[RMDB]
RNA sequence: GGGAACGACUCGAGUAGAGUCGAAAAGAUAUGGAUAGACAUCGAGCGUAUCCAUCGGAAACGAUGGUAAGCGCGAAGACAGUGUACUAUCCUAAGUCAAAGGUACCAGGGUUCGCCCUGGUACCAAGAACUGGAAAAUGUUCGCAUUUUCCAGUUCAAAAGAAACAACAACAACAAC
Reactivity to DMS in 0.01 (KOAc 150mM, MgCl2 10mM, bicine 150mM(pH8.5), 24C), signal-to-noise 4, nucleotides 027 to 126: g000a000u000a080u000g010g010a020u000a010g010a050c010a010u000c020g020a050g020c000g040u000a140u010c000c010a000u000c000g010g010a030a000a050c000g010a000u000g000g000u000a050a150g020c010g040c000g010a060a150g030a050c300a100g010u000g010u000a190c020u000a020u000c000c000u000a000a090g000u000c010a120a130a220g000g010u000a000c000c000a020g000g000g000u000u010c300g000c010c000c010u010g000g010u000a000c000c010a030a050
Reactivity to 2A3 in 0.01 (KOAc 150mM, MgCl2 10mM, bicine 150mM(pH8.5), 24C), signal-to-noise 3, nucleotides 027 to 126: g000a010u040a010u060g020g000a000u010a000g010a000c010a040u130c090g050a030g060c000g000u000a020u020c000c010a000u000c000g000g010a010a010a000c000g000a000u010g040g020u060a300a220g000c010g000c000g010a050a040g130a020c040a000g010u000g000u070a300c000u000a010u000c000c000u010a020a000g020u000c050a130a040a200g000g000u010a000c000c010a010g000g020g010u050u120c260g230c000c010c020u010g000g010u000a000c010c000a010a000